The data come from the RNA Mapping Database (RMDB), library TTRINS.
An RNA of 177 nucleotides, treated with DMS and read out base by base.
For DMS the reverse transcriptase was MarathonRT.
RNA sequence: GGGAACGACUCGAGUAGAGUCGAAAAGAUAUGGAUCUACGGGAGGUGAUAAUACAGUGCUAUAAUCGCUCUCGGAAACGAGAGCGGUAGCACUGUUAUUAUCACCGAAGAACGUAGAUCCUAAGUCCUUGAAAGGUUUGUUCGCAAACCUUUCAAGAAAAGAAACAACAACAACAAC
Reactivity to DMS in 0.01 (KOAc 150mM, MgCl2 10mM, bicine 150mM(pH8.5), 24C), signal-to-noise 1, nucleotides 027 to 126: g010a090u020a260u020g000g000a000u000c000u000a000c010g000g010g000a070g010g010u010g030a000u000a000a010u000a010c000a000g000u000g000c010u000a060u000a300a120u000c000g030c000u000c000u000c000g000g000a120a100a180c000g010a030g020a000g040c010g020g010u000a000g020c000a010c000u000g000u010u000a000u000u000a000u000c000a000c000c000g000a020a140g000a150a110c030g000u000a000g000a010u000c000c010u020a010a100g000u000c040